Source: RMDB library OK1LIB, as collected in RNAgym. This 177-nucleotide RNA was probed chemically with DMS and 2A3. 2A3 is a SHAPE reagent: it acylates the 2'-hydroxyl of flexible nucleotides of all four kinds. 2A3 adducts were read by reverse transcription with SuperScript II with manganese.

RNA sequence: GGGAACGACUCGAGUAGAGUCGAAAACGCAUGUGUACUCGGGACGGUGCGGCUUCGUUGGUUCGGGUCUGUCGCGGUUGGUGAUGUCUGUCGCGUCAGGGCGUGUUCAGGCAGGUUUAUGAGUGCGGGAGCAUGAUUCGUUCGCGGAUCAUGCUCCAAAAGAAACAACAACAACAAC
Reactivity to DMS in 0.01 (KOAc 150mM, MgCl2 10mM, bicine 150mM(pH8.5), 24C), signal-to-noise 2, nucleotides 027 to 126: c060g000c130a030u000g000u030g040u000a050c040u000c030g000g000g000a090c100g000g010u010g010c060g000g010c040u020u010c040g010u010u010g010g020u020u000c070g000g000g000u020c040u020g010u000c040g030c050g010g020u000u000g000g030u020g020a100u010g030u010c000u000g010u000c020g020c040g000u000c060a080g000g010g010c020g010u010g000u040u000c040a030g000g000c010a040g020g000u000u000u000a100u020g000a070g010u000g000c100g000
Reactivity to 2A3 in 0.01 (KOAc 150mM, MgCl2 10mM, bicine 150mM(pH8.5), 24C), signal-to-noise 4, nucleotides 027 to 126: c030g020c020a060u070g050u020g030u130a040c030u020c030g020g040g030a020c010g010g030u040g030c030g030g000c000u040u020c070g050u030u080g050g030u040u050c010g020g010g050u000c030u050g040u040c020g010c030g040g020u030u080g040g050u060g030a090u050g040u020c020u010g020u000c010g000c000g030u010c040a050g000g080g020c000g000u050g050u050u060c010a010g000g000c010a030g020g040u040u080u040a140u130g040a060g030u040g020c020g000
The 2A3 profile rests on 3,663 reads.
Values are in units of 0.01, from 0 to 300, in steps of 10.